Description
This 177-nucleotide RNA was probed chemically with DMS.
[RMDB]
RNA sequence: GGGAACGACUCGAGUAGAGUCGAAAAAAAAAGAUAUGGACCCUCAAGGAGAGGUUGGACUAUUGCUAUCGGAAACGAUAGCAACGAAUCCAACUACCCACCUCCGACAGGGUCCUAAGUCAAAAAAGAUACAACAGUACUUCGGUACUGUUGUAUCAAAAGAAACAACAACAACAAC
Reactivity to DMS in 0.01 (KOAc 150mM, MgCl2 10mM, bicine 150mM(pH8.5), 24C), signal-to-noise 2, nucleotides 027 to 126: a040a050a070a110a090g000a030u010a070u000g000g000a010c000c000c000u000c040a030a300g010g030a010g000a060g000g010u000u000g010g000a010c080u000a110u000u000g000c010u000a000u000c000g000g000a010a010a050c000g000a040u000a000g000c000a000a010c020g000a010a020u010c010c010a010a000c000u010a090c080c060c090a300c110c000u000c000c000g000a300c300a010g000g010g000u010c000c000u000a000a020g000u010c010a000a040a120a040a070a110
Reactivities are given for positions 27 through 126. Conditions: 150 mM KOAc, 10 mM MgCl2 and 150 mM bicine (pH 8.5), 24 C.